[RMDB]
Structure probing data (2A3 and DMS) for a 177-nucleotide construct. For DMS, 73,411 sequencing reads were counted. Values cover nucleotides 27 to 126. It was measured as part of the RMDB library OK1LIB. The RNA was probed in 150 mM KOAc, 10 mM MgCl2 and 150 mM bicine (pH 8.5) at 24 C.
RNA sequence: GGGAACGACUCGAGUAGAGUCGAAAACGGGCGAAUGGCUGAAUGCUCUAUAGAUAGUGAAACAGGUGAUAUCGGCGCAUCGACUACGUGCCUGUCUCGGCUACGAUCAGCCGGGGUGCAUGUGCCAAGUGUGUGUUCGUUUCGACGAGCACGCGCUAAAAGAAACAACAACAACAAC
Reactivity to 2A3 in 0.01 (KOAc 150mM, MgCl2 10mM, bicine 150mM(pH8.5), 24C), signal-to-noise 9, nucleotides 027 to 126: c020g000g010g010c010g030a090a030u050g030g000c010u030g040a050a030u100g010c010u000c010u030a070u030a050g110a040u040a020g110u080g110a070a050a020c030a020g000g040u030g040a050u040a030u110c040g010g000c010g000c020a020u020c020g050a050c020u090a030c040g020u030g000c000c000u020g000u010c010u000c000g000g000c000u040a040c080g150a110u080c050a000g000c000c000g000g000g000g000u030g000c010a020u030g010u030g010c000c010a030
Reactivity to DMS in 0.01 (KOAc 150mM, MgCl2 10mM, bicine 150mM(pH8.5), 24C), signal-to-noise 9, nucleotides 027 to 126: c090g000g000g010c030g010a070a070u010g010g000c010u010g010a060a070u020g010c030u010c040u010a120u020a070g010a100u010a070g000u010g010a060a080a070c100a060g000g010u000g000a100u020a070u010c040g010g000c080g010c070a050u010c060g020a070c080u010a050c090g010u000g000c010c070u010g010u010c020u000c010g000g000c010u010a080c230g020a100u030c130a030g000c000c000g010g000g000g000u000g010c040a030u000g010u010g000c030c030a070